[RMDB]
RNA sequence: GGGAACGACUCGAGUAGAGUCGAAAAGGUUCUUGAUUCAUGAAGAAGCAUGGAUUAACAGUGUGAGAGGGUCCUCACCCCUCACACUCCACCACUUCCAACAGUUUGUUUUGGUUUUAGCUAUUGGCAAAUCUCUCCGUUUCGACGGAGAGAUUUGAAAAGAAACAACAACAACAAC
Reactivity to 2A3 in 0.01 (KOAc 150mM, MgCl2 10mM, bicine 150mM(pH8.5), 24C), signal-to-noise 1, nucleotides 027 to 126: g140g020u170u040c160u080u020g000a010u000u020c000a030u070g050a250a200g170a190a070g270c000a000u000g000g000a060u000u020a030a000c000a170g000u030g000u060g000a000g050a140g050g000g000u150c090c020u100c130a070c000c040c000c000u000c000a000c000a000c000u000c020c020a030c000c000a100c000u000u000c000c000a040a080c020a120g090u070u070u020g240u040u040u050u050g280g020u110u110u050u000a000g000c010u070a040u080u100g080g000
Reactivity to DMS in 0.01 (KOAc 150mM, MgCl2 10mM, bicine 150mM(pH8.5), 24C), signal-to-noise 1, nucleotides 027 to 126: g000g020u000u000c080u000u000g000a000u020u040c010a000u000g020a220a120g070a110a090g000c080a020u000g000g000a040u000u000a000a110c300a080g070u000g000u000g000a040g050a190g000g000g030u000c250c270u000c300a270c000c000c000c000u000c000a000c000a000c030u090c090c080a090c000c030a160c150u000u000c000c020a010a080c270a060g010u040u010u040g000u000u000u050u000g010g010u010u030u000u000a120g000c090u040a150u000u060g010g020